Chemical mapping of a 177-nucleotide RNA with DMS and 2A3. For 2A3 the reverse transcriptase was SuperScript II with manganese. For DMS, 1,240 sequencing reads were counted. Conditions: 150 mM KOAc, 10 mM MgCl2 and 150 mM bicine (pH 8.5), 24 C.
RNA sequence: GGGAACGACUCGAGUAGAGUCGAAAAUACGUGACCUUCGGGUCACGUAACCGGCGUUCCCAUGUCAAAAAGAGAGACGCAAUCUCGACAGCGGCCUUUUCGUAUGAGUUGCUUUCGAGCAACUCAACACAGCCGUAAUGUUCGCAUUACGGCUGUGAAAAGAAACAACAACAACAAC
Reactivity to DMS in 0.01 (KOAc 150mM, MgCl2 10mM, bicine 150mM(pH8.5), 24C), signal-to-noise 2, nucleotides 027 to 126: u000a010c000g000u010g000a000c000c000u000u010c110g030g000g020u000c000a000c000g010u000a000a150c040c050g000g010c020g010u000u000c000c000c000a170u000g050u010c130a080a050a120a070a050g000a070g000a030g000a070c090g030c050a160a290u000c010u010c010g000a050c060a070g000c100g000g000c100c070u000u000u000u010c090g030u030a070u000g000a010g000u000u000g000c000u000u000u000c140g000a040g010c000a000a030c000u010c000a040a060
Reactivity to 2A3 in 0.01 (KOAc 150mM, MgCl2 10mM, bicine 150mM(pH8.5), 24C), signal-to-noise 2, nucleotides 027 to 126: u050a000c000g000u000g000a000c000c030u010u030c260g030g000g000u000c010a000c010g000u000a010a020c020c010g040g020c000g000u000u000c000c010c020a040u110g130u090c100a010a100a100a120a000g080a030g010a010g010a040c060g030c100a030a100u030c030u020c090g020a050c050a020g000c000g040g030c000c000u080u130u040u080c110g030u180a070u130g000a020g000u000u000g000c000u040u070u100c120g030a000g000c010a020a010c040u010c000a040a020